[RMDB]
RNA sequence: GGGAACGACUCGAGUAGAGUCGAAAAUUUCACAAUGAAUCUCCAGCGUAUGGAGUUUAUGCUGGUGAACGAACGGCUACGUUAGGAAGAACAAUGAGACCGUAUGCUCCAUCAAUUGCUCCAUCGACCAGUGAUCGUACUUCGGUACGAUCACUGGAAAAGAAACAACAACAACAAC
Reactivity to 2A3 in 0.01 (KOAc 150mM, MgCl2 10mM, bicine 150mM(pH8.5), 24C), signal-to-noise 1, nucleotides 027 to 126: u000u020u070c060a060c110a130a210u280g070a120a100u050c050u000c050c020a070g000c070g090u040a050u020g020g050a040g000u140u120u030a020u030g000c010u040g000g050u000g080a080a000c040g030a080a020c040g030g000c050u120a020c080g060u040u080a030g140g090a100a100g110a220a040c010a070a070u120g030a040g030a030c010c020g030u040a020u060g010c010u000c020c020a030u060c040a030a160u130u060g000c000u000c020c000a020u050c020g080a090
This 177-nucleotide RNA was probed chemically with 2A3. The 2A3 profile rests on 733 reads.